[RMDB]
RNA sequence: GGGAACGACUCGAGUAGAGUCGAAAACGCUGGGAUUCACAUGUACGGGAGCGUCCUGAAGCGCGCACGGGACGCGACGAUCGUACUGUGAGAUCCUGUGCUGAAGCGCGCACGGCAACCGAAAGGUGCGAAAGUUAAUCUGAUUCGUCAGAUUAACCAGUACACUAUUCUUCGGAAUAGUGUACUGAAAAGAAACAACAACAACAAC
Reactivity to DMS in 0.01 (KOAc 150mM, MgCl2 10mM, bicine 150mM(pH8.5), 24C), signal-to-noise 2, nucleotides 027 to 156: c050g000c030u000g030g020g000a040u000u010c030a050c030a040u000g020u010a020c010g010g020g000a090g010c010g050u000c000c000u000g010a040a090g060c000g000c000g000c000a300c060g020g000g000a000c000g040c010g010a020c170g000a070u000c020g040u000a000c010u000g000u000g010a080g010a030u000c010c040u010g000u000g030c000u000g000a060a030g020c030g040c040g000c010a300c010g020g000c020a070a190c020c000g010a100a110a200g000g030u010g000c030g010a080a100a130g020u000u000a010a000u010c060u010g000a050u000u000c300g000u010c010a010g010a030u000u000a010a010c000
Reactivity to 2A3 in 0.01 (KOAc 150mM, MgCl2 10mM, bicine 150mM(pH8.5), 24C), signal-to-noise 5, nucleotides 027 to 156: c040g000c010u050g000g020g030a030u170u130c020a010c010a040u290g000u020a010c020g010g040g040a050g000c000g000u010c010c000u050g040a190a040g010c010g000c010g000c010a010c010g000g000g000a010c000g010c030g040a050c020g040a040u090c000g000u000a010c000u000g000u010g010a030g010a030u000c000c000u000g030u020g000c000u030g030a150a060g010c010g000c000g000c010a000c000g010g000c010a010a020c000c000g050a100a040a030g020g000u030g000c020g070a140a060a000g010u000u000a000a000u000c000u000g010a030u030u090c230g060u030c080a000g000a000u000u000a000a000c010